[RMDB]
RNA sequence: GGGAACGACUCGAGUAGAGUCGAAAAAAUAUCCAUACCAUUCUGAGAGGAAGAUAACCAAUCAUCAGAAAUUGAAGAGCAUACCAAGCCUAGGAUUUGUUGAAAAGAUGAUAUAUGAAUCUGUUAACAAAGCAGGUUAUUUCGAUAACCUGCUUUGAAAAGAAACAACAACAACAAC
Reactivity to DMS in 0.01 (KOAc 150mM, MgCl2 10mM, bicine 150mM(pH8.5), 24C), signal-to-noise 3, nucleotides 027 to 126: a080a070u010a060u000c010c010a140u000a110c100c040a090u000u000c010u000g000a090g010a160g010g000a090a090g010a200u010a110a100c070c030a060a120u000c040a050u000c020a030g000a060a070a050u010u000g010a090a060g000a080g020c040a080u000a090c100c080a090a070g000c020c040u000a070g010g010a100u000u010u000g000u000u010g000a080a040a060a090g010a050u000g000a080u010a060u010a080u000g010a070a040u010c010u010g010u000u000a050a160